[RMDB]
RNA sequence: GGGAACGACUCGAGUAGAGUCGAAAACAAAAAGCGUCUACUCCGCGAUAGUAGUAAACAAAAAGACUGCAAUUGUCAAGAUUGCUAAACAAAAAGCCGGUACUAGGCAAGAGUACGAAACAACAAAGGGAAUCAUAUACUUCGGUAUAUGAUUCCCAAAAGAAACAACAACAACAAC
Reactivity to DMS in 0.01 (KOAc 150mM, MgCl2 10mM, bicine 150mM(pH8.5), 24C), signal-to-noise 1, nucleotides 027 to 126: c100a090a160a060a100a000g000c090g040u000c010u060a060c000u000c110c060g000c160g000a040u080a000g130u040a000g000u020a090a060a090c110a050a100a120a020a110g060a020c200u000g000c000a040a060u000u000g060u060c130a020a050g000a000u000u110g050c110u020a110a130a040c120a000a100a130a180a150g080c090c040g000g000u000a060c000u060a090g000g070c000a240a000g000a060g000u000a020c070g000a210a000a030c000a020a090c300a180a140a120
Reactivity to 2A3 in 0.01 (KOAc 150mM, MgCl2 10mM, bicine 150mM(pH8.5), 24C), signal-to-noise 1, nucleotides 027 to 126: c000a000a130a000a160a020g030c030g010u000c000u070a000c020u030c020c020g040c000g070a070u030a000g110u020a010g020u010a050a050a000c110a010a120a090a000a000g050a000c050u020g000c000a050a000u110u000g160u150c000a010a100g030a000u000u090g070c010u080a140a000a080c130a100a220a000a000a000g010c000c020g000g090u070a080c090u090a070g000g040c010a110a040g080a040g000u060a120c100g140a100a020a090c140a030a010c040a000a130a000